Structure probing data (2A3 and DMS) for a 177-nucleotide construct. Source: RMDB library TTRDES, as collected in RNAgym. High 2A3 reactivity points to a flexible backbone, as in loops and unpaired stretches. Reactivities are rounded to 0.1 and cut off at 0 and 3.

RNA sequence: GGGAACGACUCGAGUAGAGUCGAAAAGAUAUGGAUCCCACACUGCGACGAUCUAGCGGUCGGAAACGACCGUCUAGGGAGCAGGUGGGAUCCUAAGUCAAAAGAGUGUGUGUUCGCACACACUCAAGAUGAUCAAAAACUUCGGUUUUUGAUCAUCAAAAGAAACAACAACAACAAC
Reactivity to 2A3 in 0.01 (KOAc 150mM, MgCl2 10mM, bicine 150mM(pH8.5), 24C), signal-to-noise 3, nucleotides 027 to 126: g010a000u010a000u040g000g000a000u000c000c020c010a000c010a020c000u020g020c000g300a300c020g000a290u000c010u000a000g010c000g000g000u000c010g000g000a010a020a010c000g010a000c010c010g200u020c000u000a010g010g000g000a020g000c000a000g000g010u010g010g000g010a000u000c010c000u000a000a000g000u000c000a000a020a110a190g000a000g000u010g000u000g000u000g020u070u130c300g110c090a000c000a000c000a000c000u000c000a000a000
Reactivity to DMS in 0.01 (KOAc 150mM, MgCl2 10mM, bicine 150mM(pH8.5), 24C), signal-to-noise 3, nucleotides 027 to 126: g000a010u000a040u020g000g000a000u000c000c000c000a010c010a080c030u000g020c010g010a100c300g000a020u000c000u000a000g010c000g010g010u000c010g020g000a010a010a030c000g010a010c010c010g030u020c000u000a010g000g020g000a010g030c000a000g000g010u000g000g000g000a000u000c000c000u000a000a040g000u010c000a150a120a130a140g010a030g010u000g020u000g010u000g000u000u010c280g020c010a010c000a000c000a010c000u000c000a050a090
The RNA was probed in 150 mM KOAc, 10 mM MgCl2 and 150 mM bicine (pH 8.5) at 24 C. For 2A3 the reverse transcriptase was SuperScript II with manganese.